RNA sequence: GGGAACGACUCGAGUAGAGUCGAAAACUGGGACACAGGCACUUUCCCACACAGGAUGGAGCCGGGCCACCCUCACAGCUCCUGCCCUGCAGACGCUGGCCUUGUGGAGGGAGGCAGGCAGCAGGAGCAGUGCUUUCUGGGCCUCUGUAGCCAGAGAGUCAGCACUAAUGUUCGCAUUAGUGCUGACAAAAGAAACAACAACAACAAC
Reactivity to 2A3 in 0.01 (KOAc 150mM, MgCl2 10mM, bicine 150mM(pH8.5), 24C), signal-to-noise 1, nucleotides 027 to 156: c020u040g100g040g080a010c010a030c050a200g010g000c010a040c080u130u090u060c000c030c030a050c000a000c020a030g010g000a040u110g000g040a020g000c010c050g020g020g000c010c010a010c010c010c010u090c000a050c000a000g010c000u040c060c010u000g010c000c000c000u010g050c020a030g040a200c020g040c120u080g120g000c000c020u110u100g080u190g110g020a030g010g050g000a020g090g000c000a020g030g010c020a030g000c000a000g020g020a030g000c000a000g010u070g000c020u040u150u060c100u050g050g000g060c000c000u080c060u200g010u050a070g030c010c020a000g030a020g030a010
Structure probing data (2A3) for a 207-nucleotide construct. The RNA was probed in 150 mM KOAc, 10 mM MgCl2 and 150 mM bicine (pH 8.5) at 24 C. Source: RMDB library OK3TST, as collected in RNAgym. For 2A3 the reverse transcriptase was SuperScript II with manganese.